[RMDB]
RNA sequence: GGGAACGACUCGAGUAGAGUCGAAAAUCAUCAACACAUUUCGGUUAAAUAUAACUGACAAAUCAAACAAUAAUUUCGCAGUAGCUGCGUAAUAGCCACUGCAUCGCCUAACAGCAUCUCCUACGUGCUGUUAACGCGAUUCAACCCUAGUAGGAUACGAAUUGCACAACUUCGGUUGUGCAAUUCGAAAAGAAACAACAACAACAAC
Reactivity to 2A3 in 0.01 (KOAc 150mM, MgCl2 10mM, bicine 150mM(pH8.5), 24C), signal-to-noise 2, nucleotides 027 to 156: u080c020a060u070c050a050a120c080a010c040a190u120u130u070c050g000g030u020u020a020a250a030u230a170u080a040a060c030u060g030a010c110a040a140a100u190c060a030a060a110c050a050a180u240a220a090u060u180u200c040g000c000a000g010u010a020g010c030u060g060c050g160u180a030a060u130a150g000c010c000a000c030u030g020c020a040u020c010g000c010c000u000a000a000c000a000g000c000a000u000c010u000c080c000u000a020c040g000u070g010c000u000g000u000u000a000a080c020g000c000g040a010u150u150c060a060a080c000c000c000u040a010g010u000a000g000g000a020u030a000